[RMDB]
RNA sequence: GGGAACGACUCGAGUAGAGUCGAAAACUUGUACGCUUCGGCGUACAAGAAAUCCCAGGUAUGCAUCCAACAACAACAACAACAGAUGCUUACCAUGAUGUAAAACCAAAGACUUCGGUCUUUGGAAGUAUUUCUUAGUGUUCGCACUAAGAAAUACAAAAGAAACAACAACAACAAC
Reactivity to 2A3 in 0.01 (KOAc 150mM, MgCl2 10mM, bicine 150mM(pH8.5), 24C), signal-to-noise 5, nucleotides 027 to 126: c000u000u000g000u000a000c000g000c000u030u040c180g130g000c000g000u000a010c000a000a000g000a010a030a000u000c000c000c000a000g010g000u010a010u030g010c010a010u000c090c020a040a030c020a050a030c010a040a010c010a030a030c170a040a010c040a070g010a010u000g000c000u000u000a000c000c010a030u150g040a040u120g050u190a070a090a040a090c000c000a000a000a000g000a000c000u050u120c300g090g000u000c000u000u010u000g000g000a000a010
Reactivity to DMS in 0.01 (KOAc 150mM, MgCl2 10mM, bicine 150mM(pH8.5), 24C), signal-to-noise 4, nucleotides 027 to 126: c000u000u000g010u000a010c000g010c000u000u010c190g030g010c000g010u010a010c000a010a010g010a040a100a110u000c010c010c000a100g020g010u010a010u000g000c000a010u010c000c160a130a100c180a110a100c110a070a090c150a070a080c080a090a080c290a060g000a020u000g010c010u000u000a000c010c000a100u010g000a120u010g000u010a060a100a120a200c000c000a000a020a020g000a030c000u000u010c120g020g000u000c000u000u010u000g000g000a020a040
An RNA of 177 nucleotides, treated with 2A3 and DMS and read out base by base. For DMS, 3,868 sequencing reads were counted. The data come from the RNA Mapping Database (RMDB), library M2PK50. The RNA was probed in 150 mM KOAc, 10 mM MgCl2 and 150 mM bicine (pH 8.5) at 24 C.